[RMDB]
An RNA of 177 nucleotides, treated with DMS and 2A3 and read out base by base.
For DMS the reverse transcriptase was MarathonRT.
The data come from the RNA Mapping Database (RMDB), library OK2TST.
The RNA was probed in 150 mM KOAc, 10 mM MgCl2 and 150 mM bicine (pH 8.5) at 24 C.
Reactivities are given for positions 27 through 126.
RNA sequence: GGGAACGACUCGAGUAGAGUCGAAAACUCUGCCGUGCGCAGGCUUUCCAACCAGACUGGGCCCAAAUCGACUGCCAACGCAAUCUGGGCGGGCAAGACCUUCGGCAAACUGGUGGCCGAAAGCGGAAAUCACCAUUUACUUCGGUAAAUGGUGAUUAAAAGAAACAACAACAACAAC
Reactivity to DMS in 0.01 (KOAc 150mM, MgCl2 10mM, bicine 150mM(pH8.5), 24C), signal-to-noise 5, nucleotides 027 to 126: c040u000c020u010g020c010c020g010u000g020c160g020c040a040g000g010c110u000u000u000c030c020a150a100c040c020a030g000a140c150u000g000g020g010c020c010c030a040a110a090u010c090g010a130c060u000g000c020c020a100a200c100g030c040a060a080u000c120u000g000g000g010c080g010g000g010c060a050a080g000a110c060c030u000u000c100g010g000c010a040a080a120c080u000g010g020u000g010g020c060c030g010a010a050a030g020c080g010g000a060
Reactivity to 2A3 in 0.01 (KOAc 150mM, MgCl2 10mM, bicine 150mM(pH8.5), 24C), signal-to-noise 2, nucleotides 027 to 126: c030u030c030u030g000c000c020g250u160g020c120g040c030a010g000g020c000u000u020u000c010c000a040a020c010c000a030g130a240c060u080g010g100g000c030c010c000a040a050a050u110c050g060a050c060u060g010c020c000a160a030c080g000c040a020a050u040c100u120g070g020g030c040g000g000g000c020a030a050g060a100c000c040u040u040c000g000g000c000a000a080a000c040u050g020g020u020g040g050c020c010g040a030a000a000g050c070g040g030a040